[RMDB]
RNA sequence: GGGAACGACUCGAGUAGAGUCGAAAAUUGUUGGAGGUUAUAAUCAAUGCAUUAUAUUAUAACCCAUCGAUGUCUCUUGGGGUACUUGAAAUGCAUCAGUGGACUUUACCAUUCUUUGCGUUAUGGAGAUGACUAAUUAGUUCGCUAAUUAGUCAUCAAAAGAAACAACAACAACAAC
Reactivity to DMS in 0.01 (KOAc 150mM, MgCl2 10mM, bicine 150mM(pH8.5), 24C), signal-to-noise 8, nucleotides 027 to 126: u000u000g010u000u000g020g010a110g020g010u000u000a010u000a010a010u000c110a120a090u010g000c200a110u000u000a100u010a040u000u000a020u000a010a020c010c000c030a080u000c050g010a050u000g000u000c040u000c020u000u000g010g000g010g020u010a070c100u000u000g010a070a060a060u000g000c020a030u000c070a050g020u000g010g000a150c220u010u000u010a070c030c020a050u000u000c090u000u000u000g010c060g010u000u000a100u000g000g010a300
Reactivity to 2A3 in 0.01 (KOAc 150mM, MgCl2 10mM, bicine 150mM(pH8.5), 24C), signal-to-noise 3, nucleotides 027 to 126: u080u040g090u080u080g070g090a130g060g030u010u000a020u020a010a020u060c160a050a100u110g020c020a080u120u170a140u110a010u170u000a010u000a030a000c010c000c000a010u050c020g050a030u030g040u030c000u000c000u070u050g020g010g000g020u010a050c040u040u070g080a070a030a030u030g000c000a000u000c000a010g020u040g000g040a020c030u050u120u130a130c020c010a040u060u050c050u090u060u100g030c010g010u030u050a050u060g040g000a070
The record gives the reactivity of an RNA of 177 nucleotides to DMS and 2A3. The DMS profile rests on 13,480 reads. It was measured as part of the RMDB library OK2TST.